[RMDB]
RNA sequence: GGGAACGACUCGAGUAGAGUCGAAAAAUGAAGCUCUUUUGGCAAAAAUCCAUCAAUGGUUCUUGAUUCAUGAAGAAGCAUGGAUUAACAGUGUGAGAGGGUCCUCACCCCUCACACUCCACCACUUCUAUUCCACUAAGUUCGCUUAGUGGAAUAGAAAAGAAACAACAACAACAAC
Reactivity to 2A3 in 0.01 (KOAc 150mM, MgCl2 10mM, bicine 150mM(pH8.5), 24C), signal-to-noise 9, nucleotides 027 to 126: a000u130g030a080a020g020c020u030c030u060u150u110u150g020g010c060a070a050a040a020a040u030c020c010a040u080c070a070a150u070g090g040u060u030c020u050u080g100a140u070u080c060a040u160g070a100a090g050a050a010g120c020a010u020g010g010a010u030u030a070a050c030a090g000u010g000u030g010a010g040a130g020g000g010u100c040c030u100c090a100c000c000c000c000u000c000a000c000a000c000u000c000c010a070c000c010a050c010u010u000
Reactivity to DMS in 0.01 (KOAc 150mM, MgCl2 10mM, bicine 150mM(pH8.5), 24C), signal-to-noise 3, nucleotides 027 to 126: a070u010g010a130a160g040c050u010c050u020u010u000u010g020g000c140a050a050a090a030a030u000c000c010a070u030c150a120a080u010g010g000u010u010c030u000u020g020a130u050u010c170a040u040g000a060a050g010a030a050g000c020a030u000g000g000a050u000u010a040a120c190a010g000u000g020u000g010a010g000a170g000g000g000u000c220c100u010c150a210c010c000c010c000u020c010a030c010a000c000u000c100c040a020c020c020a070c180u010u000
Source information
An RNA of 177 nucleotides, treated with 2A3 and DMS and read out base by base. The RNA was probed in 150 mM KOAc, 10 mM MgCl2 and 150 mM bicine (pH 8.5) at 24 C. For DMS the reverse transcriptase was MarathonRT. Source: RMDB libraries RFM100 and RFMREP, as collected in RNAgym.